An RNA of 207 nucleotides, treated with DMS and 2A3 and read out base by base. For 2A3, 3,568 sequencing reads were counted. For DMS, 4,149 sequencing reads were counted. The reactions ran in a buffer of 150 mM KOAc, 10 mM MgCl2 and 150 mM bicine (pH 8.5), at 24 C.

RNA sequence: GGGAACGACUCGAGUAGAGUCGAAAAGGGUUGCCUCUUAGGGGUCCAUCGGGUUGCGAUUCUGCGGAUCUAUUUGCCAUCGAUCAGCUUAUCUGUAGGAGUAAUCCUACGAAGAUAAGCAGGUCUACCGGCAAAUUCGAUAUACAGUAUAUCGCGUACUACCAUAAUCGUUCGCGAUUAUGGUAGUAAAAGAAACAACAACAACAAC
Reactivity to DMS in 0.01 (KOAc 150mM, MgCl2 10mM, bicine 150mM(pH8.5), 24C), signal-to-noise 1, nucleotides 027 to 156: g020g020g010u000u000g010c050c030u010c030u000u010a160g030g030g070g030u000c030c030a060u000c020g020g030g010u000u010g020c000g030a070u000u010c010u000g000c030g010g000a050u000c040u020a050u000u010u000g030c020c000a170u010c100g010a020u010c010a110g030c000u000u000a000u000c000u000g000u000a000g010g010a050g010u000a100a150u010c000c030u000a020c000g020a050a090g010a020u000a010a000g000c010a010g030g000u000c010u000a030c210c090g060g010c010a000a020a000u000u000c170g030a020u000a050u000a010c010a060g010u010a140u010a090u000c000g040c000g010u000
Reactivity to 2A3 in 0.01 (KOAc 150mM, MgCl2 10mM, bicine 150mM(pH8.5), 24C), signal-to-noise 3, nucleotides 027 to 156: g050g020g010u040u130g030c010c010u040c050u070u170a060g000g020g000g030u040c020c010a050u080c070g000g030g030u080u160g000c010g010a010u050u000c000u020g000c040g090g000a010u000c000u010a000u000u000u000g000c000c000a020u020c090g000a000u010c010a030g000c000u000u000a000u010c010u030g000u000a000g010g010a020g010u160a080a150u010c000c000u000a000c030g050a030a000g010a010u000a000a000g000c010a000g000g000u000c010u020a050c040c100g000g000c010a000a000a010u030u030c030g000a000u000a000u010a060c010a000g060u080a060u020a000u160c010g000c000g000u000